The record gives the reactivity of an RNA of 207 nucleotides to 2A3. The reactions ran in a buffer of 150 mM KOAc, 10 mM MgCl2 and 150 mM bicine (pH 8.5), at 24 C. Values are in units of 0.01, from 0 to 300, in steps of 10.
[RMDB]
RNA sequence: GGGAACGACUCGAGUAGAGUCGAAAAGUAUUUGAGUAUACAUUCAAGUCACUCUCAACCGGCGAAAUUGCCCUGCCAGCUGAUGGUAUGCAGGCUGUUCCACAGCAACUUGCGAUGAAUGCUCGCGAUGCCGGUGCGAGUAUCGUCUGUGAGGAGGGAAGUGGGCCCUAUUCGUAGGGCCCACUUCAAAAGAAACAACAACAACAAC
Reactivity to 2A3 in 0.01 (KOAc 150mM, MgCl2 10mM, bicine 150mM(pH8.5), 24C), signal-to-noise 1, nucleotides 027 to 156: g110u150a090u020u060u060g010a000g070u090a100u140a280c050a080u080u190c110a060a120g030u020c010a050c080u040c000u000c020a050a150c010c000g060g000c060g120a070a070a100u070u200g090c000c000c000u080g110c000c000a000g010c050u170g110a170u050g020g000u030a140u140g020c020a050g030g020c040u020g000u150u000c050c000a050c000a020g030c020a000a070c050u000u100g050c040g020a020u050g090a060a160u120g020c000u000c020g060c000g090a070u080g000c000c020g010g000u010g000c030g000a000g000u000a020u210c020g030u030c030u070g020u020g000a120g060g020a060g000g020